[RMDB]
RNA sequence: GGGAACGACUCGAGUAGAGUCGAAAAGCGUACUACGUCGUGGCCUCGCAGACAUGCGAUGAUGAAACGAUCUCCCAAAUAGGAGAUCGUAACCAUCGCAACAGCUGCGAGAAUCGACGUAUCGCAAAACACUAGCAAACUUCGGUUUGCUAGUGAACCACCACGCAAAGUUCGCUUUGCGUGGUGGAAAAGAAACAACAACAACAAC
Reactivity to 2A3 in 0.01 (KOAc 150mM, MgCl2 10mM, bicine 150mM(pH8.5), 24C), signal-to-noise 2, nucleotides 027 to 156: g000c000g040u110a110c060u000a000c050g000u000c000g030u050g140g230c020c000u000c010g000c000a000g100a200c030a050u030g000c010g000a000u020g010a040u060g030a190a190a000c010g000a010u000c010u010c020c020c060a200a300a050u300a090g000g000a000g000a000u000c000g000u000a000a050c000c000a010u000c020g030c000a050a010c070a010g020c010u000g000c010g000a000g000a000a070u040c010g000a000c020g010u000a010u040c000g000c000a000a050a100a000c050a000c010u000a010g000c000a000a000a010c020u070u060c270g150g000u000u010u000g000c010u000a010g000u000g010a000a020

The record gives the reactivity of an RNA of 207 nucleotides to 2A3.
Conditions: 150 mM KOAc, 10 mM MgCl2 and 150 mM bicine (pH 8.5), 24 C.